This 207-nucleotide RNA was probed chemically with 2A3 and DMS.
For 2A3 the reverse transcriptase was SuperScript II with manganese.
It was measured as part of the RMDB library M2RFPK.
The DMS profile rests on 3,545 reads.
For DMS the reverse transcriptase was MarathonRT.
Conditions: 150 mM KOAc, 10 mM MgCl2 and 150 mM bicine (pH 8.5), 24 C.
[RMDB]
RNA sequence: GGGAACGACUCGAGUAGAGUCGAAAACAGAACUGGAUGGGCCGUGUGCUUAACCAGGACAAGAUCUCCUUCUCUCCAACGUUGUUGCCAACUAAUGAUUCUCCUAACCUGUGCUUGGAGAGACGUGCUACCAUAUAGGUGUUCGCACCUAUAUGAAUCUAUGAUACAGAUUCGUCUGUAUCAUAGAAAAAGAAACAACAACAACAAC
Reactivity to 2A3 in 0.01 (KOAc 150mM, MgCl2 10mM, bicine 150mM(pH8.5), 24C), signal-to-noise 2, nucleotides 027 to 156: c040a020g060a060a040c000u020g020g030a060u020g060g040g030c050c050g250u240g100u220g080c000u100u050a090a050c000c010a000g000g060a020c090a050a090g070a140u050c000u000c020c040u030u010c000u000c010u000c000c000a050a030c120g000u010u000g010u020u030g000c040c020a090a010c130u070a130a080u150g140a160u100u060c060u050c040c020u040a050a080c030c060u040g070u150g090c080u020u000g000g000a000g000a000g000a020c020g010u070g030c040u070a060c020c010a010u000a000u000a020g040g000u010g050u000u050c210g000c040a000c000c000u000a000u010a000u000g000a000a010
Reactivity to DMS in 0.01 (KOAc 150mM, MgCl2 10mM, bicine 150mM(pH8.5), 24C), signal-to-noise 2, nucleotides 027 to 156: c080a140g000a070a160c000u010g020g020a240u000g000g000g060c050c030g020u020g050u000g000c030u000u000a070a090c010c000a030g050g000a200c080a110a090g000a080u010c040u010c050c010u010u010c020u010c000u010c000c010a030a130c120g030u000u000g000u010u000g000c000c050a050a140c030u010a110a110u000g000a190u000u010c070u000c060c020u010a110a090c010c040u000g000u010g010c080u000u020g020g010a060g010a030g010a030c060g000u000g010c060u010a200c170c010a050u000a010u000a010g020g030u000g030u010u000c300g040c000a020c010c000u000a000u000a010u000g000a060a050